Source: RMDB library M2RFPK, as collected in RNAgym. Chemical mapping of a 207-nucleotide RNA with 2A3. Values cover nucleotides 27 to 156. High 2A3 reactivity points to a flexible backbone, as in loops and unpaired stretches. The RNA was probed in 150 mM KOAc, 10 mM MgCl2 and 150 mM bicine (pH 8.5) at 24 C.

[RMDB]
RNA sequence: GGGAACGACUCGAGUAGAGUCGAAAAACAUAGGUCAUGCUUACGAGCAUGGCCUAUGACGAAUCUCAAGCAAUCAAGCAUUCUACUUCUAUUGCAACACUGAGGAGCUUACGAGCUCCUCAGUGAAAAAAGAGAGUAAUGUUCGCAUUACUCUCAAGUGGUUCUAUAACUUCGGUUAUAGAACCACAAAAGAAACAACAACAACAAC
Reactivity to 2A3 in 0.01 (KOAc 150mM, MgCl2 10mM, bicine 150mM(pH8.5), 24C), signal-to-noise 2, nucleotides 027 to 156: a010c000a000u000a000g000g000u000c010a010u000g010c000u050u040a080c260g110a010g030c000a000u000g000g000c000c000u000a010u000g000a010c020g100a070a140u000c020u010c100a040a030g000c000a010a020u070c000a000a080g060c030a130u170u110c060u170a100c040u100u030c020u130a030u000u060g010c050a090a010c030a020c000u000g010a010g000g000a000g020c000u110u090a110c220g010a000g000c000u010c010c010u000c000a010g000u010g000a000a000a000a000a000a000g000a000g000a000g000u000a000a000u020g000u020u050c100g000c090a000u010u010a000c000u000c000u000c010a010a010